[RMDB]
RNA sequence: GGGAACGACUCGAGUAGAGUCGAAAAACGCUGGGCAUUCUUUAGUGAAUAACACGUUUGAUACGAAGAACUGUUAUUGCUCAAGAAUGCCAAUCGUAAAACAAUUUACCACUUCGGUGGUAAAUUGCUUGCUCAAAAAGUUCGCUUUUUGAGCAAGAAAAGAAACAACAACAACAAC
Reactivity to DMS in 0.01 (KOAc 150mM, MgCl2 10mM, bicine 150mM(pH8.5), 24C), signal-to-noise 2, nucleotides 027 to 126: a020c010g020c130u010g010g010g010c000a020u000u000c000u000u000u000a010g010u010g010a030a010u000a010a010c000a000c250g010u000u000u000g000a180u000a140c300g010a130a300g000a000a010c020u000g000u000u000a010u000u000g010c010u010c030a050a000g000a020a000u000g000c000c000a010a000u000c010g000u000a050a060a070a300c000a030a000u000u000u000a010c000c000a010c000u000u000c210g010g000u010g000g000u000a000a000a000u000u000g000
Reactivity to 2A3 in 0.01 (KOAc 150mM, MgCl2 10mM, bicine 150mM(pH8.5), 24C), signal-to-noise 2, nucleotides 027 to 126: a000c020g030c030u060g020g000g000c000a000u010u000c000u010u000u010a020g000u040g300a040a010u000a010a000c000a030c130g030u010u010u050g170a180u210a150c100g060a100a160g010a060a000c000u000g000u010u000a010u000u010g000c010u000c020a000a010g000a000a010u010g000c000c010a000a000u000c000g010u020a000a010a000a190c000a000a000u000u000u000a000c000c000a010c020u010u070c220g110g000u000g000g010u010a000a000a000u000u000g000

The record gives the reactivity of an RNA of 177 nucleotides to DMS and 2A3.
Reactivities are given for positions 27 through 126.
The reactions ran in a buffer of 150 mM KOAc, 10 mM MgCl2 and 150 mM bicine (pH 8.5), at 24 C.